[RMDB]
RNA sequence: GGGAACGACUCGAGUAGAGUCGAAAAGAAGGCGUAGGGAAACCAAUAUGGCCGCAGCAUUGCGAGGGCCACCGUGUUCAAGCGCGGGGAGUCAAACGGGCACGACCCGAAACCCGGUGAUCUACGCGCUGAACUUUAGGUUCGCCUAAAGUUCAGCAAAAGAAACAACAACAACAAC
Reactivity to DMS in 0.01 (KOAc 150mM, MgCl2 10mM, bicine 150mM(pH8.5), 24C), signal-to-noise 1, nucleotides 027 to 126: g030a110a140g000g000c010g000u000a060g000g050g000a090a110a000c010c010a110a130u000a110u000g000g010c050c000g000c090a300g000c070a170u000u060g000c010g000a300g020g000g000c000c000a060c000c020g000u000g020u000u010c210a110a120g010c000g010c000g030g000g000g020a060g000u000c060a080a050a170c020g000g000g010c020a130c270g000a180c010c010c010g000a000a170a070c050c000c140g020g000u000g000a020u030c010u000a010c000g000c010
Reactivity to 2A3 in 0.01 (KOAc 150mM, MgCl2 10mM, bicine 150mM(pH8.5), 24C), signal-to-noise 1, nucleotides 027 to 126: g050a090a090g140g000c010g000u020a010g000g020g020a060a140a000c050c000a080a050u170a080u190g010g000c070c010g000c010a010g000c060a240u130u300g010c030g000a090g000g000g000c000c000a010c000c000g000u000g020u090u300c170a170a050g140c000g000c010g020g020g000g020a090g030u080c050a160a020a030c010g020g020g000c050a050c300g220a300c000c000c030g010a050a020a000c010c020c010g000g010u040g000a000u000c010u000a010c010g010c000
An RNA of 177 nucleotides, treated with DMS and 2A3 and read out base by base. The RNA was probed in 150 mM KOAc, 10 mM MgCl2 and 150 mM bicine (pH 8.5) at 24 C. The DMS profile rests on 543 reads.